The record gives the reactivity of an RNA of 207 nucleotides to 2A3.
It was measured as part of the RMDB library VIROID.
Values cover nucleotides 27 to 156.

RNA sequence: GGGAACGACUCGAGUAGAGUCGAAAAGCUUCAACCCCAAACCGCUUUUCUUGAAUCUUCACUGCUCUCCGGACGAGGGUGAAAGCCCUCGGAGCCCUAGAUUGGGUCCCUCGGGAUCUUUCUUGAGGUUCCUGUGGUGCUCACCUGACCCUGCAGGGAGGUGAUAUUACUUCGGUAAUAUCACCUCAAAAGAAACAACAACAACAAC
Reactivity to 2A3 in 0.01 (KOAc 150mM, MgCl2 10mM, bicine 150mM(pH8.5), 24C), signal-to-noise 1, nucleotides 027 to 156: g010c010u220u170c080a090a120c060c000c000c080a010a080a160c110c050g070c110u100u200u200u120c040u080u130g110a140a070u070c030u130u100c190a040c070u060g010c020u050c020u060c190c090g050g040a100c080g060a030g030g000g000u020g020a110a070a010g010c010c010c010u020c040g000g000a010g000c000c000c000u020a030g010a060u060u150g140g050g010u010c020c000c010u070c150g130g050g010a010u000c000u040u070u000c030u020u120g060a250g010g000u010u040c030c030u150g080u130g020g010u190g040c010u010c010a000c000c010u000g080a110c000c000c010u050g050c020a040g000g040